Source: RMDB library TTRDEL, as collected in RNAgym. An RNA of 177 nucleotides, treated with DMS and 2A3 and read out base by base. For 2A3, 4,456 sequencing reads were counted.

RNA sequence: GGGAACGACUCGAGUAGAGUCGAAAAGAUAUGGAGUGAUAACCUGCUAAGACUAUUCGGAAACGAACGAAUCUUAGAACUACAGGGAAGCACUCCUAAGUCAAAGCCGAUGCUUCGGCAUCGGCAACGUGAAUUAAUCGUUCGCGAUUAAUUCACGAAAAGAAACAACAACAACAAC
Reactivity to DMS in 0.01 (KOAc 150mM, MgCl2 10mM, bicine 150mM(pH8.5), 24C), signal-to-noise 3, nucleotides 027 to 126: g010a020u010a300u000g000g010a020g010u000g000a000u010a190a290c000c000u000g000c010u000a000a000g000a020c050u010a240u000u000c000g000g000a140a150a180c020g020a010a020c140g010a030a050u000c000u010u000a000g000a040a050c120u010a300c000a010g000g000g000a060a130g000c000a000c000u000c000c000u000a010a100g000u000c030a090a150a150g010c000c000g020a000u000g000c020u000u010c210g030g000c030a000u000c000g010g010c000a020a000
Reactivity to 2A3 in 0.01 (KOAc 150mM, MgCl2 10mM, bicine 150mM(pH8.5), 24C), signal-to-noise 3, nucleotides 027 to 126: g050a010u060a040u200g000g000a010g000u000g010a020u020a070a080c010c000u030g020c010u010a000a000g010a020c050u100a080u040u010c000g060g050a130a120a100c020g040a030a010c040g060a140a250u000c000u020u000a020g020a030a050c080u230a040c110a010g000g000g000a180a120g010c010a000c010u000c000c000u010a060a000g010u010c070a190a010a010g010c000c000g020a000u000g000c010u060u110c300g150g000c030a000u010c000g000g020c010a010a000